[RMDB]
RNA sequence: GGGAACGACUCGAGUAGAGUCGAAAAGAGAUGCAGUUAAGUAGUACUACAGCCUUCUGUCCUGGCUAGCCAUUGUCAUUGACCAGCAUGGCGAUAUCCAUGCAAAUACCAAUCCAGGAUCCUAGCCCCAUAAUACUCGAUUCGUCGAGUAUUAUGGAAAAGAAACAACAACAACAAC
Reactivity to DMS in 0.01 (KOAc 150mM, MgCl2 10mM, bicine 150mM(pH8.5), 24C), signal-to-noise 9, nucleotides 027 to 126: g010a050g010a090u000g010c030a040g000u000u000a080a090g010u010a080g010u020a050c040u000a080c050a050g010c060c020u000u000c040u020g000u010c020c010u000g000g020c070u010a050g000c080c050a080u010u010g000u010c080a060u020u020g000a100c100c150a190g010c010a010u000g000g000c260g020a100u060a060u020c010c010a010u000g010c020a070a060a060u030a090c100c050a040a080u020c050c030a040g000g000a100u020c070c010u000a060g010c070c070
Reactivity to 2A3 in 0.01 (KOAc 150mM, MgCl2 10mM, bicine 150mM(pH8.5), 24C), signal-to-noise 9, nucleotides 027 to 126: g070a010g000a010u080g030c050a020g040u070u100a210a030g020u150a050g040u070a100c030u030a030c050a020g040c010c000u050u070c020u060g060u020c010c010u010g020g000c020u020a020g010c020c020a080u070u100g040u060c040a060u020u140g070a100c040c030a020g010c010a010u010g020g000c040g090a080u080a030u240c010c000a000u010g000c000a020a070a050u160a060c040c020a020a010u050c020c020a030g020g030a040u040c010c010u030a050g020c000c000